[RMDB]
Chemical mapping of a 177-nucleotide RNA with DMS and 2A3. It was measured as part of the RMDB library TTRDEL. The RNA was probed in 150 mM KOAc, 10 mM MgCl2 and 150 mM bicine (pH 8.5) at 24 C. For 2A3 the reverse transcriptase was SuperScript II with manganese. High DMS reactivity at an A or C suggests that its Watson-Crick edge is free.
RNA sequence: GGGAACGACUCGAGUAGAGUCGAAAAGAUAUGGACUACUCAUUUGUCAGAAAUUUCGGAAACGAGCUUUCUUGGAUUUAAUGAGGUAGUCCUAAGUCAAACGAGUAGAUCUUCGGAUCUACUCGAACAGUACCGAAAUGUUCGCAUUUCGGUACUGAAAAGAAACAACAACAACAAC
Reactivity to DMS in 0.01 (KOAc 150mM, MgCl2 10mM, bicine 150mM(pH8.5), 24C), signal-to-noise 1, nucleotides 027 to 126: g020a030u000a300u010g000g000a000c000u000a020c020u000c000a000u000u000u010g010u000c010a020g000a030a010a010u010u000u010c000g000g020a090a090a150c010g020a000g030c080u000u000u000c000u010u010g020g020a080u000u000u000a020a000u020g000a030g010g000u000a010g010u000c000c000u030a000a060g010u000c030a090a110a210c020g010a010g010u000a010g000a000u000c000u000u050c200g010g000a010u000c000u000a010c000u000c010g000a020a070
Reactivity to 2A3 in 0.01 (KOAc 150mM, MgCl2 10mM, bicine 150mM(pH8.5), 24C), signal-to-noise 2, nucleotides 027 to 126: g010a000u060a030u130g010g020a000c000u000a010c000u000c000a020u030u070u300g250u160c030a020g000a020a010a000u030u020u030c030g000g060a000a000a000c010g020a020g020c020u040u040u030c070u130u190g240g010a210u300u300u250a060a000u000g000a000g100g150u030a000g010u000c000c000u000a010a020g020u010c050a110a050a130c020g020a000g000u000a000g000a020u050c000u040u130c300g010g030a020u000c010u010a000c010u000c000g010a000a000